The record gives the reactivity of an RNA of 177 nucleotides to DMS and 2A3.
High DMS reactivity at an A or C suggests that its Watson-Crick edge is free.
2A3 is a SHAPE reagent: it acylates the 2'-hydroxyl of flexible nucleotides of all four kinds.
For DMS, 7,891 sequencing reads were counted.
The RNA was probed in 150 mM KOAc, 10 mM MgCl2 and 150 mM bicine (pH 8.5) at 24 C.

RNA sequence: GGGAACGACUCGAGUAGAGUCGAAAAGAGAAAUUCGUAAGUCUCUUUGCUACUUUAAUGACUUUUUCUGGUAAUGUAGAUCUUGAUGCGUUAGCUAGUGAUAUUUUUGACACUCCUAGCGUACUUCGCUAUAGACUAGGUUCGCCUAGUCUAUAGCAAAAGAAACAACAACAACAAC
Reactivity to DMS in 0.01 (KOAc 150mM, MgCl2 10mM, bicine 150mM(pH8.5), 24C), signal-to-noise 7, nucleotides 027 to 126: g000a040g010a030a030a070u000u010c290g000u010a160a180g000u000c000u000c010u000u000u010g000c010u000a010c010u000u000u000a110a090u010g010a080c300u010u000u010u010u010c100u020g000g010u000a040a030u010g000u000a020g000a030u000c020u000u000g010a070u000g010c010g010u000u000a040g010c110u000a030g020u000g010a080u000a040u000u010u010u010u010g010a150c050a020c030u000c300c000u000a010g000c010g020u000a040c090u010u010c290
Reactivity to 2A3 in 0.01 (KOAc 150mM, MgCl2 10mM, bicine 150mM(pH8.5), 24C), signal-to-noise 6, nucleotides 027 to 126: g030a010g000a010a060a010u160u120c110g030u170a070a060g030u000c000u000c000u030u010u010g020c000u010a030c000u120u090u150a150a090u180g110a090c010u110u100u100u180u120c060u130g080g010u080a060a060u060g010u010a010g010a050u010c010u030u130g050a080u070g030c000g000u020u020a010g000c050u010a010g010u010g060a070u040a170u210u180u070u100u160g050a020c010a000c010u000c000c000u000a010g000c000g010u010a030c020u040u120c050